This 177-nucleotide RNA was probed chemically with 2A3 and DMS. The 2A3 profile rests on 3,053 reads. Values cover nucleotides 27 to 126. The DMS profile rests on 4,952 reads. High 2A3 reactivity points to a flexible backbone, as in loops and unpaired stretches. 2A3 adducts were read by reverse transcription with SuperScript II with manganese.
RNA sequence: GGGAACGACUCGAGUAGAGUCGAAAACGAUGAGGGGAGAAGAGAAGUGGACAGGUGGGUCGAAGACGCCCGCCCCAAGGCGGACGCCCGUCGCCUGUUUGCAUGCGGGGGUCAGACCCCCUUACCGAGGUAAUCAUACUUUCGAGUAUGAUUACCUAAAAGAAACAACAACAACAAC
Reactivity to 2A3 in 0.01 (KOAc 150mM, MgCl2 10mM, bicine 150mM(pH8.5), 24C), signal-to-noise 3, nucleotides 027 to 126: c040g060a080u150g020a070g000g040g010g000a050g000a120a020g030a010g000a110a040g040u080g040g020a010c040a040g000g010u110g060g080g010u030c020g060a130a090g000a010c060g210c070c000c030g020c020c000c020c010a030a010g000g000c040g070g000a030c090g090c050c060c040g040u020c000g000c010c000u060g030u080u220u180g060c050a060u190g040c050g000g010g000g000g000u010c000a000g000a030c000c010c030c010c000u030u000a030c020c030g040
Reactivity to DMS in 0.01 (KOAc 150mM, MgCl2 10mM, bicine 150mM(pH8.5), 24C), signal-to-noise 5, nucleotides 027 to 126: c090g010a060u000g010a080g010g010g010g010a060g000a110a080g000a080g000a070a060g020u010g010g000a110c210a040g000g020u020g030g000g010u000c020g000a110a120g020a030c050g010c000c000c000g020c010c140c180c090a060a060g000g020c010g020g000a050c100g020c100c160c160g010u000c030g010c000c000u000g000u010u000u000g020c170a050u010g010c050g010g000g000g010g010u000c030a110g010a220c020c000c000c010c000u000u000a040c060c060g000